[RMDB]
RNA sequence: GGGAACGACUCGAGUAGAGUCGAAAACGCCGACUGUCGCGGUGGGACUCCAACCCCACCCAUGCCGGGCUGCGCUCGGCGGCCACUCGCGGCGCGAGUUUCACCACACUGCUGGGCAUCGAGGACGAACCCCUCAAGCAUUCGUGCUUGAGGGGUUAAAAGAAACAACAACAACAAC
Reactivity to DMS in 0.01 (KOAc 150mM, MgCl2 10mM, bicine 150mM(pH8.5), 24C), signal-to-noise 1, nucleotides 027 to 126: c040g050c020c010g020a020c150u000g000u000c080g030c080g030g030u000g050g000g020a060c050u000c090c140a080a170c170c000c010c000a040c010c020c080a110u000g000c030c020g010g000g040c020u000g020c230g010c000u000c040g000g020c000g000g010c030c070a060c110u020c060g040c020g020g010c020g000c020g010a090g000u010u010u000c060a120c020c030a150c130a110c060u000g000c020u000g010g010g010c060a010u000c050g000a090g000g000a110c090g020